Annotation
The data come from the RNA Mapping Database (RMDB), library ARCHII. Chemical mapping of a 207-nucleotide RNA with 2A3. The RNA was probed in 150 mM KOAc, 10 mM MgCl2 and 150 mM bicine (pH 8.5) at 24 C. The 2A3 profile rests on 1,954 reads. Values cover nucleotides 27 to 156. As a SHAPE reagent, 2A3 marks flexible, mostly unpaired nucleotides at the ribose 2'-OH.
[RMDB]
RNA sequence: GGGAACGACUCGAGUAGAGUCGAAAAGUGUGGAUGGAGUGAGAGGAGGAGUCCUGUGUAUGUCGUUGUCAACGUCGACCGAGCGUCCGUGCCAAGCGCUGCGUCACCAGGGGAUGACUGUCGGAAGAUGGUCAGUCCCGGGUGCAUAAGGAGUGGUACCUAUUACGGGGUUCGCCCCGUAAUAGGUAAAAGAAACAACAACAACAAC
Reactivity to 2A3 in 0.01 (KOAc 150mM, MgCl2 10mM, bicine 150mM(pH8.5), 24C), signal-to-noise 2, nucleotides 027 to 156: g090u070g020u040g040g050a050u030g030g010a030g070u110g010a120g010a030g030g030a020g020g000a030g000u060c000c010u060g000u030g010u090a020u150g040u000c060g000u000u100g080u080c000a040a030c080g080u040c020g060a050c040c010g020a020g000c030g000u020c030c020g020u020g030c030c010a060a070g060c020g000c030u080g030c030g060u090c010a000c000c000a030g000g000g000g000a000u010g000a000c000u010g020u000c010g000g050a070a040g000a050u010g010g000u000c010a020g080u020c000c000c000g000g000g000u000g020c030a080u070a070a040g060g000a050g040u060g010g030u020